[RMDB]
RNA sequence: GGGAACGACUCGAGUAGAGUCGAAAAGGAGCUUGAUUCGUCAAGCUCCAAAAGAUACAGACCCGAUUCCUAGGGUAAACAAGAAGCUAUGCACCGAGGCAAAAAGGAAUGGAUUCGUCCAUUCCAAGUAUACCAUGGUCUUCGGACCAUGGUAUACAAAAGAAACAACAACAACAAC
Reactivity to DMS in 0.01 (KOAc 150mM, MgCl2 10mM, bicine 150mM(pH8.5), 24C), signal-to-noise 3, nucleotides 027 to 126: g000g020a010g020c020u000u000g010a030u000u000c160g020u010c000a000a000g000c000u010c000c000a000a030a090a090g000a170u010a110c210a170g000a100c000c010c000g010a160u000u000c000c010u000a170g000g000g000u000a030a090a070c150a070a040g000a090a070g000c050u000a020u010g030c060a040c100c050g000a100g000g010c110a020a030a080a090a040g000g000a000a010u000g000g010a030u010u040c230g000u000c000c000a010u000u000c010c000a020a020
Reactivity to 2A3 in 0.01 (KOAc 150mM, MgCl2 10mM, bicine 150mM(pH8.5), 24C), signal-to-noise 2, nucleotides 027 to 126: g010g010a000g020c000u000u000g010a010u060u040c100g050u010c110a000a000g000c020u000c000c000a000a000a000a000g010a010u100a050c080a030g140a080c030c000c010g010a050u040u000c010c000u000a020g000g000g000u030a030a040a010c050a060a030g180a060a020g050c040u080a040u230g020c030a030c060c070g040a050g000g060c080a010a050a000a070a120g000g010a010a010u000g010g020a000u050u050c220g070u050c050c000a010u010u000c000c000a010a000